[RMDB]
RNA sequence: GGGAACGACUCGAGUAGAGUCGAAAAUAUAUGCGGCCUAUGGCGAUCCAGGGACCGAAUCAGCUUUCGCAUCACCGGCACCUCGUGCUUUGAGGCCCGACUCACCGUAAAGGCCACCGGCAGUUCAGUUAGCCGAAGGAUUCGUCCUUCGGCUAACAAAAGAAACAACAACAACAAC
Reactivity to DMS in 0.01 (KOAc 150mM, MgCl2 10mM, bicine 150mM(pH8.5), 24C), signal-to-noise 2, nucleotides 027 to 126: u000a150u000a070u010g020c000g000g010c090c010u010a110u010g000g030c040g020a060u010c080c050a170g010g020g020a180c090c040g010a060a050u000c090a110g010c010u000u010u000c070g030c030a060u000c100a080c060c050g000g020c120a090c060c120u000c170g020u010g050c140u020u010u000g060a090g030g010c180c020c020g000a100c090u000c060a050c010c020g020u020a100a100a090g020g020c000c010a080c030c100g000g010c110a100g010u010u000c110a090